RNA sequence: GGGAACGACUCGAGUAGAGUCGAAAAGAUAUGGAUGUAACAAAAGGCGAGGAUCUGGUGUCUCGGAAACGAGACCCAGGGAGCCUAGUUACAUCCUAAGUCAAAGAUCGAGCUUCGGCUCGAUCAAGUUACUUAAUUCGUUCGCGAAUUAAGUAACAAAAGAAACAACAACAACAAC
Reactivity to 2A3 in 0.01 (KOAc 150mM, MgCl2 10mM, bicine 150mM(pH8.5), 24C), signal-to-noise 4, nucleotides 027 to 126: g010a000u010a000u050g000g000a000u010g010u010a000a010c040a060a300a200a090g010g000c020g100a300g050g000a010u010c000u010g030g000u110g000u110c000u000c000g010g010a010a000a000c000g000a000g000a010c010c000c000a000g010g010g000a000g000c000c000u010a000g000u000u010a000c000a000u000c000c000u000a010a000g000u000c010a090a120a120g010a010u000c010g000a000g020c020u090u230c300g120g000c000u010c000g000a010u010c000a000a000
Reactivity to DMS in 0.01 (KOAc 150mM, MgCl2 10mM, bicine 150mM(pH8.5), 24C), signal-to-noise 4, nucleotides 027 to 126: g000a010u000a030u010g000g000a020u010g000u000a010a000c000a230a140a170a040g020g020c000g010a070g020g000a000u010c000u000g000g010u010g020u000c000u000c000g020g000a000a010a020c000g010a020g010a010c000c000c000a010g000g010g010a010g030c000c000u000a040g010u000u000a010c000a000u000c000c000u000a000a070g010u000c010a130a130a160g000a010u000c000g000a020g010c010u000u010c260g040g010c000u000c000g000a000u000c000a050a100